[RMDB]
RNA sequence: GGGAACGACUCGAGUAGAGUCGAAAAAGCAACGAGUGUGUGUGGGACGUUUUAUCCCAAGCUCUGAGUAGAGCACGCGCUCACACACACCGCGUGCGAGCAUCAGCAGAGCGCAAACGCUGGUAAAAGGUAAAAUAGCAUUCGUGCUAUUUUACCUAAAAGAAACAACAACAACAAC
Reactivity to DMS in 0.01 (KOAc 150mM, MgCl2 10mM, bicine 150mM(pH8.5), 24C), signal-to-noise 8, nucleotides 027 to 126: a100g000c010a050a020c020g010a300g000u000g000u000g010u000g020u000g010g010g000a070c010g000u000u000u010u000a140u010c050c030c040a080a110g000c000u000c000u000g010a190g020u010a060g000a030g010c010a080c070g000c070g000c010u000c000a010c010a000c000a010c010a010c000c010g000c020g000u000g010c010g000a130g010c090a030u000c030a020g010c020a100g010a110g010c080g000c130a080a090a100c130g000c020u000g010g010u010a060a060a120
Reactivity to 2A3 in 0.01 (KOAc 150mM, MgCl2 10mM, bicine 150mM(pH8.5), 24C), signal-to-noise 6, nucleotides 027 to 126: a000g020c020a010a000c010g010a050g040u010g000u000g000u000g000u000g010g000g030a030c010g000u000u040u160u230a150u110c030c010c020a000a010g000c010u010c010u080g300a240g180u300a010g180a000g020c010a010c030g040c020g000c000u000c010a000c000a000c000a000c010a000c010c000g050c020g000u020g000c000g000a030g020c020a030u060c010a000g000c020a020g030a060g160c100g000c120a110a070a070c070g000c020u010g030g000u090a080a120a030